[RMDB]
RNA sequence: GGGAACGACUCGAGUAGAGUCGAAAAUGUCGGCCGUGGACACUGUGAAUCCGGCGUUGCGCACGUAGUUCAGGGCGAGCUGCUGGGUCGCAAAUAUCAUUUUCAAGGCCUGCUGCGGCCCAUAUCUACGCGAAAUAAGGUGAUAGAUUCCACCGGAAUUAACCUGACCUUUCGAGGUCAGGUUAAUAAAAGAAACAACAACAACAAC
Reactivity to 2A3 in 0.01 (KOAc 150mM, MgCl2 10mM, bicine 150mM(pH8.5), 24C), signal-to-noise 2, nucleotides 027 to 156: u070g030u010c040g080g070c030c030g080u090g080g000a050c070a070c150u160g030u070g220a110a040u010c010c010g000g000c070g010u080u150g070c050g000c010a050c100g030u020a000g040u140u100c070a040g010g050g000c060g030a090g000c080u060g000c020u160g070g000g000u020c020g010c040a000a030a010u150a080u080c130a110u030u020u100u100c050a090a060g040g000c010c020u040g010c000u040g050c000g010g000c000c000c030a040u040a010u030c010u050a030c000g000c040g070a030a080a140u280a090a080g000g010u030g040a030u050a100g120a090u110u020c020c000a030c010c020g010g060a040
Reactivity to DMS in 0.01 (KOAc 150mM, MgCl2 10mM, bicine 150mM(pH8.5), 24C), signal-to-noise 1, nucleotides 027 to 156: u030g010u000c030g000g050c050c080g060u000g010g010a090c040a060c040u000g060u000g010a110a090u000c030c020g020g040c030g000u000u000g000c030g000c020a030c030g040u000a060g020u010u000c130a180g010g020g000c080g000a120g000c000u000g050c030u010g020g030g040u000c000g010c130a030a050a170u000a120u030c140a120u010u000u000u000c080a140a210g000g010c000c000u000g010c050u000g040c000g020g000c000c010c000a180u000a040u000c050u000a040c030g000c000g000a090a070a040u000a080a110g000g070u000g000a250u000a130g000a200u000u000c000c020a090c040c020g020g000a140